Chemical mapping of a 177-nucleotide RNA with 2A3 and DMS. The RNA was probed in 150 mM KOAc, 10 mM MgCl2 and 150 mM bicine (pH 8.5) at 24 C. It was measured as part of the RMDB library OK1LIB.

[RMDB]
RNA sequence: GGGAACGACUCGAGUAGAGUCGAAAAGCUCUGCGAGACAGAUCGAACAACAAAGAGAGAUCGAAAAUCUUAGAGGAGAGAACGAAUCUGUCGACUUCACUAGGACAUUGUCUAUCAGAGGUCCAAAGACCAUUCAUGGCUUCGGCUAUGGAUGGUCAAAAGAAACAACAACAACAAC
Reactivity to 2A3 in 0.01 (KOAc 150mM, MgCl2 10mM, bicine 150mM(pH8.5), 24C), signal-to-noise 9, nucleotides 027 to 126: g030c000u000c000u000g040c070g010a010g000a000c010a020g010a010u000c010g060a080a070c040a060a030c050a030a300a010g120a010g000a000g000a020u010c010g050a040a040a020a050u000c000u010u010a010g010a030g040g010a010g000a010g020a050a020c020g020a050a130u140c100u130g080u030c020g060a130c000u000u010c000a010c020u010a000g000g010a000c010a080u070u100g000u000c000u000a020u030c000a000g010a010g020g040u000c000c000a030a030a000
Reactivity to DMS in 0.01 (KOAc 150mM, MgCl2 10mM, bicine 150mM(pH8.5), 24C), signal-to-noise 9, nucleotides 027 to 126: g010c010u000c000u000g000c080g010a030g010a020c000a060g000a030u010c010g010a300a230c050a080a110c260a080a140a100g000a050g000a300g010a010u000c010g020a040a070a120a200u000c000u000u000a010g010a070g010g000a020g000a090g000a120a030c010g000a100a110u040c150u020g010u000c010g000a300c010u000u000c000a060c010u000a000g000g000a020c090a080u020u010g000u000c000u000a060u020c020a020g000a020g000g000u010c010c010a070a100a100